[RMDB]
RNA sequence: GGGAACGACUCGAGUAGAGUCGAAAAGGUCAUAAUUUCAUUGGCAGUUAGCAUCAGGUUUAAUUUUUCUAGCAUGUUACAUUUACCAAAAUGUCUGGUUUCAGUUAUGCUUAGGCACUGACUGAAUCAGCUCUGAGCAGCAUGAUGGCUUAAGGUAUCAUAAUCACUCCUUCGGGAGUGAUUAUGAAAAAGAAACAACAACAACAAC
Reactivity to DMS in 0.01 (KOAc 150mM, MgCl2 10mM, bicine 150mM(pH8.5), 24C), signal-to-noise 2, nucleotides 027 to 156: g000g000u000c050a070u010a040a090u000u000u000c060a160u000u000g020g010c030a110g000u000u000a070g030c050a060u000c050a140g020g020u000u000u010a040a100u010u000u000u000u000c030u010a080g010c060a030u000g010u000u000a040c020a060u010u010u000a160c090c050a070a020a060a120u000g010u000c000u010g020g000u010u020u010c010a040g020u010u000a030u010g020c010u000u000a140g040g000c010a030c080u020g050a030c020u010g010a030a150u000c000a020g000c050u010c050u010g010a130g020c040a060g060c020a070u000g000a130u000g020g020c060u010u010a050a090g020g010u000a150
Reactivity to 2A3 in 0.01 (KOAc 150mM, MgCl2 10mM, bicine 150mM(pH8.5), 24C), signal-to-noise 4, nucleotides 027 to 156: g020g010u050c030a030u050a180a110u040u110u120c070a060u090u060g040g010c030a020g040u040u070a020g040c010a040u040c040a020g020g050u040u090u160a070a140u100u120u040u070u050c040u060a040g020c030a030u070g020u010u070a020c020a030u040u060u090a100c030c020a030a100a060a060u060g040u010c010u010g060g000u030u050u190c000a010g000u000u010a020u040g010c000u060u100a150g140g000c010a060c180u090g000a010c000u000g010a010a010u000c010a000g010c010u000c030u060g070a070g000c030a010g000c010a020u100g030a040u050g070g000c020u050u060a040a030g060g000u010a030
The data come from the RNA Mapping Database (RMDB), library OK3TST. Chemical mapping of a 207-nucleotide RNA with DMS and 2A3. DMS adducts were read by reverse transcription with MarathonRT. The DMS profile rests on 5,954 reads. The RNA was probed in 150 mM KOAc, 10 mM MgCl2 and 150 mM bicine (pH 8.5) at 24 C.